[RMDB]
RNA sequence: GGGAACGACUCGAGUAGAGUCGAAAACGGUGGCAAUGGCUUGGCCCAGUUUUGCCAUCGCGACCGGAUACGGCUGAUCCAUGGUCAGCAGCAGCCCCUCGGCGAGGUUGCGCGCGCAACGCGCUGCCCGUGCUUCGCCGUUCGCGGCGAAGCACGGAAAAGAAACAACAACAACAAC
Reactivity to 2A3 in 0.01 (KOAc 150mM, MgCl2 10mM, bicine 150mM(pH8.5), 24C), signal-to-noise 1, nucleotides 027 to 126: c010g040g040u000g000g010c010a030a050u100g040g000c070u060u270g080g000c050c000c070a000g000u000u040u150u220g000c010c000a000u000c000g030c000g010a070c000c000g000g010a100u060a080c060g070g000c050u100g050a030u000c070c000a070u230g050g000u090c000a030g000c040a010g060c040a030g000c000c010c000c000u070c050g040g040c000g000a130g120g000u040u120g000c040g010c030g010c030g040c090a140a080c110g010c000g000c000u010g000c010
Structure probing data (2A3) for a 177-nucleotide construct.